[RMDB]
RNA sequence: GGGAACGACUCGAGUAGAGUCGAAAACAAAACAAACAAAACCGGUUCAUCCAAUUUAUUUGGACGCAUGAUAAGAGAAUAAGGAACCGGACUCUUAUCAACAAAACAAAAACAAACAAACAAACAACAUACGCACGUCCUUCGGGACGUGCGUAUGAAAAGAAACAACAACAACAAC
Reactivity to 2A3 in 0.01 (KOAc 150mM, MgCl2 10mM, bicine 150mM(pH8.5), 24C), signal-to-noise 1, nucleotides 027 to 126: c100a000a180a000a080c100a030a030a000c010a000a300a000a000c000c000g000g000u000u000c040a040u000c090c010a010a100u020u130u090a090u160u000u220g080g000a000c160g000c290a220u000g000a000u000a020a000g000a000g000a220a000u240a300a210g070g000a000a000c000c000g000g000a000c000u000c000u000u000a000u000c000a000a090c010a030a040a000a000c000a070a090a090a070a070c110a040a090a000c030a090a050a000c000a030a190a000c010a060a000
An RNA of 177 nucleotides, treated with 2A3 and read out base by base.
For 2A3, 329 sequencing reads were counted.
Reactivities are given for positions 27 through 126.
Source: RMDB library OK1LIB, as collected in RNAgym.
The RNA was probed in 150 mM KOAc, 10 mM MgCl2 and 150 mM bicine (pH 8.5) at 24 C.